An RNA of 177 nucleotides, treated with 2A3 and DMS and read out base by base. 2A3 adducts were read by reverse transcription with SuperScript II with manganese. The DMS profile rests on 1,977 reads. For 2A3, 2,315 sequencing reads were counted. The data come from the RNA Mapping Database (RMDB), library OK2TRN.
RNA sequence: GGGAACGACUCGAGUAGAGUCGAAAAUGAAGUCAAUGUUAAGAAGAUAACAAGGGGUAUUUGUACCAUAUAGGCCAUACCAGCCUUCAACAUUGCCUCAUGCAUUGCCUUUUAUCUAUCCGGGGAGGAAGUACUCGGUAUUCGUACCGAGUACUUCAAAAGAAACAACAACAACAAC
Reactivity to 2A3 in 0.01 (KOAc 150mM, MgCl2 10mM, bicine 150mM(pH8.5), 24C), signal-to-noise 2, nucleotides 027 to 126: u070g010a020a000g030u030c030a000a020u040g010u040u180a150a220g040a060a050g030a220u240a250a130c070a120a200g080g000g010g020u020a140u010u140u050g040u030a110c060c000a040u130a040u090a180g040g010c020c040a010u050a120c040c020a020g000c000c000u020u030c030a020a040c000a010u020u000g000c000c000u000c010a010u070g000c020a020u000u030g000c010c000u000u030u030u070a080u000c060u020a040u020c010c000g020g000g010g020a090g060
Reactivity to DMS in 0.01 (KOAc 150mM, MgCl2 10mM, bicine 150mM(pH8.5), 24C), signal-to-noise 3, nucleotides 027 to 126: u000g010a040a020g010u000c020a040a020u020g000u000u010a130a090g000a100a120g020a080u010a060a130c170a090a140g000g000g010g000u010a000u010u010u000g010u000a080c120c090a100u000a090u010a090g000g020c150c030a070u010a120c240c100a130g000c060c000u000u000c120a070a050c050a050u000u000g010c070c020u000c040a060u010g000c030a030u000u010g000c070c010u000u000u030u000a030u000c110u010a140u010c010c060g000g000g010g020a140g000